[RMDB]
RNA sequence: GGGAACGACUCGAGUAGAGUCGAAAAGAUAUGGACCAAUACAGCUUUUGACGAGCCUUGGGUCGGAAACGACCUUGGGCUCGAUAAGCUGUUGGUCCUAAGUCAAAGCUGCACUUCGGUGCAGCAAGAGGAUACUUUACUUCGGUAAAGUAUCCUCAAAAGAAACAACAACAACAAC
Reactivity to DMS in 0.01 (KOAc 150mM, MgCl2 10mM, bicine 150mM(pH8.5), 24C), signal-to-noise 4, nucleotides 027 to 126: g010a050u000a300u000g010g010a020c000c000a020a090u010a120c050a020g030c010u000u010u010u020g020a240c150g000a000g020c000c000u000u010g030g000g000u000c000g000g000a050a050a180c000g000a000c000c010u000u000g000g010g020c000u010c000g010a010u000a010a020g020c010u000g010u000u000g000g000u000c010c000u000a020a110g010u000c020a120a130a190g010c000u000g000c000a000c000u000u000c240g030g000u000g000c000a000g020c010a020a020
Reactivity to 2A3 in 0.01 (KOAc 150mM, MgCl2 10mM, bicine 150mM(pH8.5), 24C), signal-to-noise 4, nucleotides 027 to 126: g020a000u050a030u110g000g010a000c010c000a040a060u300a180c020a000g000c010u110u180u300u300g300a290c200g000a000g010c000c000u020u020g000g000g000u000c020g030g000a050a050a020c020g000a010c010c000u010u010g000g010g010c000u000c000g020a000u000a010a010g000c000u010g020u010u010g010g000u000c010c000u010a070a000g020u000c020a000a070a110g000c000u000g000c020a000c010u060u140c300g120g000u010g000c000a000g000c000a000a010